[RMDB]
RNA sequence: GGGAACGACUCGAGUAGAGUCGAAAACAGGAUCGACGAGGGUGUAAAGAGCGACUUUUUGUUCGGUAUUGUACCACCGUUAUCGGGCUAAACUUGUAGUUGCAAAUGACAACUAUGCGGAAGCUCGUCUCGCUGCUUAAUUGCGGUGUGACACUUCACUACUUUUAAGCUUCGGCUUAAAAGUAGUAAAAGAAACAACAACAACAAC
Reactivity to 2A3 in 0.01 (KOAc 150mM, MgCl2 10mM, bicine 150mM(pH8.5), 24C), signal-to-noise 9, nucleotides 027 to 156: c040a030g080g020a070u080c030g010a010c010g010a040g010g040g010u020g020u060a060a100a020g050a010g020c050g070a090c070u120u110u030u100u150g090u110u080c010g000g010u030a030u030u040g020u030a030c010c010a010c020c000g050u050u050a040u090c020g000g000g000c010u010a090a080a100c050u070u140g010u020a010g000u000u010g000c040a070a180a300u210g040a140c000a020a010c010u010a010u060g060c050g050g010a010a010g000c060u070c160g030u000c030u020c020g020c010u020g000c000u060u140a100a070u300u080g010c000g000g000u010g020u030g020a010c010a020c050u030u010c010
Reactivity to DMS in 0.01 (KOAc 150mM, MgCl2 10mM, bicine 150mM(pH8.5), 24C), signal-to-noise 3, nucleotides 027 to 156: c060a140g010g000a070u000c020g020a070c040g020a050g010g050g030u000g030u010a040a060a190g010a070g020c030g010a110c080u000u000u020u000u020g010u020u000c040g010g010u000a100u000u000g010u000a070c060c000a060c020c020g010u000u000a070u000c020g000g020g010c010u000a020a040a060c030u000u000g050u000a010g010u000u000g000c020a040a100a190u000g010a080c000a010a030c010u000a020u000g000c040g000g000a080a060g010c000u000c020g020u000c010u010c020g020c020u000g020c020u000u000a090a180u000u000g010c010g030g020u000g010u000g010a120c040a080c070u000u000c060